[RMDB]
RNA sequence: GGGAACGACUCGAGUAGAGUCGAAAAAACCCCAUCCCACAUAUGUACAUAAAAGAAGGGUUAUGAAUAUUCUGUUUCGUGUUUGUUUGCAUUACUUCAGGGGAAGCAAAUUCUUAAAGAACUGGAGUAAAGUUCUAGCAAGGGAAUAAGGCCAGGACAUGUAUGUGCUUUUCGAAGCACAUACAUGAAAAGAAACAACAACAACAAC
Reactivity to 2A3 in 0.01 (KOAc 150mM, MgCl2 10mM, bicine 150mM(pH8.5), 24C), signal-to-noise 2, nucleotides 027 to 156: a000a000c060c030c000c000a070u100c030c040c000a070c020a040u300a070u080g140u130a100c010a100u250a130a120a010a000g110a060a060g010g000g000u130u120a070u070g080a100a070u110a080u170u160c080u040g130u030u030u050c050g030u040g060u080u040u040g180u010u090u100g070c010a010u030u030a030c020u000u070c000a010g000g000g000g100a040a010g000c010a000a160a240u060u040c070u050u300a230a150a040g040a130a060c000u010g000g040a010g010u070a020a030a080g050u160u000c000u000a030g030c030a040a040g060g020g020a030a060u080a150a010g060g020c060c040a020g010g050a030
Reactivity to DMS in 0.01 (KOAc 150mM, MgCl2 10mM, bicine 150mM(pH8.5), 24C), signal-to-noise 1, nucleotides 027 to 156: a040a020c010c020c040c040a140u000c010c000c020a150c070a070u000a100u000g030u000a120c020a060u000a060a040a060a060g020a150a040g020g030g030u000u010a180u010g020a110a070u010a050u000u000c010u000g000u000u000u000c060g020u000g040u000u000u000g020u010u010u020g000c020a160u010u000a020c010u000u000c040a060g000g010g060g000a040a070g040c080a090a050a160u000u000c020u000u000a060a110a160g000a090a100c030u020g000g000a090g010u000a050a060a100g020u000u010c050u000a110g050c040a040a110g010g040g000a040a060u020a030a190g010g010c040c070a060g010g020a160